Structure probing data (DMS and 2A3) for a 207-nucleotide construct.
The 2A3 profile rests on 1,190 reads.
For DMS, 1,522 sequencing reads were counted.
[RMDB]
RNA sequence: GGGAACGACUCGAGUAGAGUCGAAAAUGCACCCGGGUAAGUCCUAUACGGCCAGCUCCCUUCGAAUCCUCCAGGGCUUGAUCGCAGCAAAGGUAGUUGGUUGUAGCGGCGCGAUAUAGUAAGCUUACCCACUUAAACCUGAUCUUCGGAUCAGGAAUCAUGUCAUGCAGUUCGCUGCAUGACAUGAAAAAGAAACAACAACAACAAC
Reactivity to DMS in 0.01 (KOAc 150mM, MgCl2 10mM, bicine 150mM(pH8.5), 24C), signal-to-noise 1, nucleotides 027 to 156: u060g030c200a200c010c010c050g000g090g100u000a080a040g010u020c110c000u000a090u010a040c030g000g020c010c030a060g010c020u000c030c000c010u010u040c000g020a200a200u010c020c000u020c000c070a300g010g050g000c070u020u000g020a160u000c190g010c010a170g020c020a100a110a030g080g040u000a190g010u000u000g000g010u000u020g000u010a050g020c000g000g030c140g010c080g000a180u000a050u000a040g010u040a040a160g000c020u000u000a030c000c000c000a160c000u020u000a070a180a210c000c000u000g020a010u000c000u000u000c300g100g020a000u000c000a030g030g030a040a040
Reactivity to 2A3 in 0.01 (KOAc 150mM, MgCl2 10mM, bicine 150mM(pH8.5), 24C), signal-to-noise 2, nucleotides 027 to 156: u150g000c030a040c000c000c000g000g000g020u000a010a010g030u090c000c000u000a000u000a000c010g010g010c000c010a010g000c000u020c030c010c010u010u030c010g080a130a130u100c010c000u020c020c010a010g000g000g050c010u090u100g080a080u150c040g010c020a010g010c000a040a000a010g010g000u020a010g000u050u030g100g010u080u130g080u190a000g000c010g050g000c110g030c000g140a050u000a000u000a030g050u030a060a040g000c000u000u020a000c010c020c000a030c010u030u130a010a030a030c000c000u010g000a000u020c000u050u060c220g080g000a010u010c000a000g000g000a010a050
For DMS the reverse transcriptase was MarathonRT. The data come from the RNA Mapping Database (RMDB), library RFM130.